[RMDB]
RNA sequence: GGGAACGACUCGAGUAGAGUCGAAAAAGCUGUCCUAGGUAAUUGACAAUUAUGCUAGAUCAUGGCAAGGAAUGUCUUGAGGUUACCUAUCCUAGAGGGCAUAUAUUUGACAGUAGGAUAUAGAUCAGUGAUUUGACGCAUUCGUGCGUCAAAUCACAAAAGAAACAACAACAACAAC
Reactivity to DMS in 0.01 (KOAc 150mM, MgCl2 10mM, bicine 150mM(pH8.5), 24C), signal-to-noise 1, nucleotides 027 to 126: a190g010c060u010g020u000c080c270u000a020g000g010u000a020a030u020u020g000a040c040a020a090u000u000a080u000g030c000u000a040g000a070u000c220a140u000g020g000c000a020a090g040g000a060a030u000g010u010c010u000u000g040a280g010g020u000u000a030c020c000u010a050u000c000c000u000a090g000a100g010g000g000c050a030u000a040u040a040u020u000u000g000a020c020a090g000u000a090g030g000a050u000a070u000a110g030a110u000c060a100
Reactivity to 2A3 in 0.01 (KOAc 150mM, MgCl2 10mM, bicine 150mM(pH8.5), 24C), signal-to-noise 1, nucleotides 027 to 126: a000g060c030u050g070u000c010c000u000a000g000g020u000a040a080u060u100g040a010c020a000a040u060u030a000u100g060c010u040a030g020a120u180c030a130u080g030g000c020a000a010g090g050a130a070u000g010u050c000u110u240g150a090g050g060u030u050a040c000c000u040a040u030c000c000u070a120g020a130g150g070g010c080a010u060a010u010a000u070u040u080g050a020c050a040g060u070a040g020g100a020u050a010u030a120g060a030u050c070a040